Chemical mapping of a 207-nucleotide RNA with 2A3 and DMS. The reactions ran in a buffer of 150 mM KOAc, 10 mM MgCl2 and 150 mM bicine (pH 8.5), at 24 C. The DMS profile rests on 1,733 reads.
RNA sequence: GGGAACGACUCGAGUAGAGUCGAAAACAGUAGUACUCGUGGACCAGGUCCACCAGCUGAACUGCCUGGGCUCGCGAAACCUUAGGGCUCCCGCCCUGCUGCAUCAUCCCGGCGAGGGCGUUACGGCCGAAUCCGAACUGGAUCGCCUCACACGUGGAGCUUCUCACAUUUUCGAAUGUGAGAAGCUAAAAGAAACAACAACAACAAC
Reactivity to 2A3 in 0.01 (KOAc 150mM, MgCl2 10mM, bicine 150mM(pH8.5), 24C), signal-to-noise 2, nucleotides 027 to 156: c030a000g070u090a020g030u080a090c020u010c040g010u010g010g000a020c010c010a010g030g090u070c020c020a100c060c010a050g070c080u090g050a030a030c030u040g020c000c050u030g020g030g010c120u060c010g000c030g050a130a100a100c000c030u050u160a030g010g010g010c020u050c030c050c020g020c020c010c010u050g000c020u070g020c030a100u100c000a030u010c030c020c000g000g010c020g070a040g010g020g000c000g060u080u050a020c040g020g010c110c070g010a030a030u000c020c040g080a060a040c030u150g000g010a040u040c030g000c000c020u030c010a100c010a010c080g040u120g050g080
Reactivity to DMS in 0.01 (KOAc 150mM, MgCl2 10mM, bicine 150mM(pH8.5), 24C), signal-to-noise 1, nucleotides 027 to 156: c040a050g000u000a020g020u000a040c090u010c060g090u010g020g020a030c000c050a210g030g020u000c030c020a120c010c040a050g070c050u010g010a100a300c010u000g010c030c070u000g000g000g050c010u010c020g040c050g010a060a130a100c020c030u000u000a180g000g030g020c010u000c060c090c080g030c010c040c010u000g030c010u010g020c050a180u000c130a120u010c000c020c000g000g020c010g020a150g000g020g050c000g020u010u000a100c060g000g020c060c030g000a070a070u000c040c030g000a130a150c030u010g020g000a170u020c020g010c010c010u010c010a040c090a120c050g040u010g000g010